An RNA of 207 nucleotides, treated with DMS and 2A3 and read out base by base.
Conditions: 150 mM KOAc, 10 mM MgCl2 and 150 mM bicine (pH 8.5), 24 C.
Values are in units of 0.01, from 0 to 300, in steps of 10.
2A3 adducts were read by reverse transcription with SuperScript II with manganese.
[RMDB]
RNA sequence: GGGAACGACUCGAGUAGAGUCGAAAAGUAAAGAUCGCUCUUUUACUCGGCAUGAUACCACCGUUAUCGGGUCAACCGAGUAGUUGCAAAUGACAACAAUGCUCAGGGUUAUGCUCUCGCUGCCUAAAAAAUCGUUUAACGUUCGCGUUAAACGAAACAAUUGCACAGACUUCGGUCUGUGCAAUUGAAAAGAAACAACAACAACAAC
Reactivity to DMS in 0.01 (KOAc 150mM, MgCl2 10mM, bicine 150mM(pH8.5), 24C), signal-to-noise 1, nucleotides 027 to 156: g050u020a120a040a090g010a070u000c090g020c030u000c040u000u000u000u000a020c020u010c000g020g000c010a060u000g000a030u020a070c030c070a180c030c040g010u000u010a070u000c030g020g030g000u000c010a150a080c000c000g000a040g040u000a020g010u000u010g010c030a090a100a120u000g010a200c030a050a030c010a060a110u000g000c010u000c010a070g000g040g000u000u000a080u000g010c020u000c020u000c030g010c020u010g000c010c080u000a000a030a080a060a050a150u010c010g000u000u000u000a000a030c000g050u000u000c300g030c040g020u010u000a000a000a000c000g000a000a060a080
Reactivity to 2A3 in 0.01 (KOAc 150mM, MgCl2 10mM, bicine 150mM(pH8.5), 24C), signal-to-noise 5, nucleotides 027 to 156: g040u060a020a080a020g060a090u110c050g010c060u030c020u030u090u020u020a010c010u000c000g020g000c080a070u110g020a050u180a300c000c040a030c030c060g150u130u090a100u220c070g000g000g000u000c000a000a030c010c010g010a010g000u010a020g010u020u020g020c040a050a190a260u190g060a100c010a030a010c020a060a120u060g000c020u040c050a050g030g000g020u090u100a090u150g040c000u020c000u020c070g030c040u060g040c020c050u160a070a050a020a000a010a030u030c010g000u000u000u000a010a000c000g010u010u030c210g010c010g110u000u010a000a000a000c000g000a010a000a000